RNA sequence: GGGAACGACUCGAGUAGAGUCGAAAAACGGUCGCUACGGCGACCGAAAGCGGACCUCGGUGUCGAGUCCGCUCUUCCCACCCGGUACCUGAUACGGCCGGUGUGGAGCCAGCUUACGAGCUGGCAACCCUGAGACUAUAUUCGUAUAGUCUCAGGGAAAAGAAACAACAACAACAAC
Reactivity to 2A3 in 0.01 (KOAc 150mM, MgCl2 10mM, bicine 150mM(pH8.5), 24C), signal-to-noise 9, nucleotides 027 to 126: a000c010g000g000u000c000g000c010u040a050c300g140g000c000g000a000c000c000g000a030a000a000g000c000g000g010a030c120c100u050c050g170g170u300g230u300c030g010a000g000u000c000c000g000c000u010c020u020u020c000c000c000a010c000c000c000g020g010u040a050c000c000u010g010a020u020a230c010g000g000c000c010g000g010u080g020u030g020g000a010g000c000c000a000g000c000u060u060a060c250g070a020g000c000u000g000g000c000a020a030
Reactivity to DMS in 0.01 (KOAc 150mM, MgCl2 10mM, bicine 150mM(pH8.5), 24C), signal-to-noise 5, nucleotides 027 to 126: a150c000g020g010u000c000g040c000u010a080c160g030g000c000g010a020c010c000g000a010a040a020g000c000g000g000a010c120c080u000c020g010g010u030g030u040c010g000a030g020u000c010c000g020c000u000c020u020u000c030c000c000a090c030c010c010g010g020u000a040c000c000u010g020a240u010a210c300g000g000c020c000g000g000u020g040u010g020g000a140g010c010c000a000g020c010u000u020a130c150g000a050g010c000u000g000g010c020a010a020